[RMDB]
RNA sequence: GGGAACGACUCGAGUAGAGUCGAAAAGAUACUAGCAUGAGAGGUACUAGCAGACAUGCUAGCUAGGUACGGUACCGAUCACCAUGAUGACUAGUCUAGUGUCUGUCCAUGAGACAUCUCGGUACCACACGCUUGGAUUGUUCGCAAUCCAAGCGUGAAAAGAAACAACAACAACAAC
Reactivity to 2A3 in 0.01 (KOAc 150mM, MgCl2 10mM, bicine 150mM(pH8.5), 24C), signal-to-noise 1, nucleotides 027 to 126: g040a000u070a030c000u010a000g000c000a030u060g010a070g040a020g200g110u150a080c000u030a000g050c020a000g040a160c010a080u040g050c020u020a000g000c050u030a020g060g100u090a050c070g030g000u000a020c010c010g040a010u050c030a050c060c000a010u070g040a030u130g010a030c020u050a070g000u080c000u050a060g020u040g010u060c070u050g010u000c000c010a040u110g060a040g060a130c050a100u070c000u000c050g000g000u040a000c010c010a020
Reactivity to DMS in 0.01 (KOAc 150mM, MgCl2 10mM, bicine 150mM(pH8.5), 24C), signal-to-noise 2, nucleotides 027 to 126: g030a090u000a040c010u000a060g020c020a120u010g050a060g000a120g020g020u000a050c010u000a050g020c030a090g020a110c300a140u010g020c020u000a050g000c120u000a050g030g000u000a110c100g010g020u000a010c000c020g000a020u000c080a110c160c100a080u010g040a110u010g010a110c050u010a040g040u000c020u010a030g010u000g010u000c030u020g010u000c000c010a070u030g000a090g020a120c180a070u000c070u000c000g000g000u010a010c010c020a290